[RMDB]
RNA sequence: GGGAACGACUCGAGUAGAGUCGAAAAUGGUCUUUGCCUCUCUCCUCAGGUUGUGAAGAUUACAGAAAUCUGGGAUGGCUUAUGGGACGCUUCUCAGCCCUAAGUAGGAAAACAGCAGUGAAAAUGGGCAUAGAUUGAGGUUCGCCUCAAUCUAUGCAAAAGAAACAACAACAACAAC
Reactivity to 2A3 in 0.01 (KOAc 150mM, MgCl2 10mM, bicine 150mM(pH8.5), 24C), signal-to-noise 2, nucleotides 027 to 126: u110g000g000u040c030u020u020u100g000c010c000u000c010u010c000u040c020c020u060c010a030g040g000u010u000g000u050g060a110a050g020a100u050u170a070c060a000g170a050a080a020u070c040u020g020g040g040a070u080g030g110c000u110u140a130u160g000g000g030a020c000g000c030u000u050c030u000c010a020g020c010c000c010u000a070a020g040u020a030g030g130a000a060a050a030c040a030g020c020a000g030u010g150a050a050a060a150u150g060g060
Reactivity to DMS in 0.01 (KOAc 150mM, MgCl2 10mM, bicine 150mM(pH8.5), 24C), signal-to-noise 3, nucleotides 027 to 126: u010g010g010u000c030u010u000u000g010c030c010u010c070u000c060u000c050c020u000c040a080g000g020u000u010g010u000g000a100a130g020a100u000u000a130c120a150g000a070a080a030u000c020u000g020g000g000a120u010g000g010c020u000u000a070u010g010g000g000a060c100g000c100u010u000c010u000c030a220g000c030c010c020u020a040a050g000u010a040g000g000a060a060a090a060c110a050g010c040a080g010u000g000a040a020a080a060u010g030g010